The record gives the reactivity of an RNA of 177 nucleotides to 2A3 and DMS. For 2A3 the reverse transcriptase was SuperScript II with manganese. It was measured as part of the RMDB library TTRDEL. Conditions: 150 mM KOAc, 10 mM MgCl2 and 150 mM bicine (pH 8.5), 24 C. Values are in units of 0.01, from 0 to 300, in steps of 10.

[RMDB]
RNA sequence: GGGAACGACUCGAGUAGAGUCGAAAAGAUAUGGAGUGUGAGUGGGAGAUCGUCGGAAACGACCGAUCGAAGAACACUACACUCCUAAGUCAAAACAUCAAGAUGAUCUUCGGAUCAUCUUGAUGAACGAUACUUGACACUUCGGUGUCAAGUAUCGAAAAGAAACAACAACAACAAC
Reactivity to 2A3 in 0.01 (KOAc 150mM, MgCl2 10mM, bicine 150mM(pH8.5), 24C), signal-to-noise 2, nucleotides 027 to 126: g020a010u070a020u150g020g000a010g020u030g000u110g190a050g030u000g010g010g010a060g010a030u000c010g010u000c000g030g030a100a070a060c040g040a030c190c170g000a000u030c000g020a290a020g000a050a010c010a010c010u010a010c000a000c010u000c000c000u020a060a010g010u000c020a010a000a090a110c010a000u010c000a000a010g000a000u020g000a010u000c020u050u110c300g100g010a010u000c010a000u010c000u010u010g000a000u000g000a010a020
Reactivity to DMS in 0.01 (KOAc 150mM, MgCl2 10mM, bicine 150mM(pH8.5), 24C), signal-to-noise 2, nucleotides 027 to 126: g000a030u020a300u000g010g020a010g020u000g000u000g040a020g030u000g000g000g020a090g000a000u000c000g020u000c000g000g000a060a110a170c000g010a010c080c080g040a000u000c020g020a070a110g000a100a130c020a020c010u000a020c000a020c000u000c000c000u000a000a070g000u000c020a100a040a110a200c020a000u010c000a020a020g000a040u000g020a000u000c000u000u030c200g000g010a010u000c000a010u010c000u000u010g020a000u000g000a040a100